[RMDB]
An RNA of 177 nucleotides, treated with DMS and read out base by base. DMS adducts were read by reverse transcription with MarathonRT. The reactions ran in a buffer of 150 mM KOAc, 10 mM MgCl2 and 150 mM bicine (pH 8.5), at 24 C. For DMS, 937 sequencing reads were counted.

RNA sequence: GGGAACGACUCGAGUAGAGUCGAAAAGAUAUGGACAGUAGGGAGCGUGGCGUAUCGGAAACGAUACCCCACGCGAGGAUCUACGUCCUAAGUCAAAGAGACCCACUGCUUCGGCAGUGGGUCUCAAGCAAGGGUGUAAGUUCGCUUACACCCUUGCAAAAGAAACAACAACAACAAC
Reactivity to DMS in 0.01 (KOAc 150mM, MgCl2 10mM, bicine 150mM(pH8.5), 24C), signal-to-noise 1, nucleotides 027 to 126: g020a090u000a300u010g010g000a000c000a110g010u000a010g010g000g000a060g020c000g040u000g000g020c300g000u000a000u000c000g000g000a080a070a220c020g000a000u000a000c000c160c000c000a010c000g010c000g000a020g020g030a050u000c000u010a000c020g000u000c000c000u000a030a130g010u030c040a030a090a130g000a060g010a010c000c000c000a010c000u000g010c000u000u010c260g060g000c000a030g000u010g000g010g010u000c000u000c000a050a080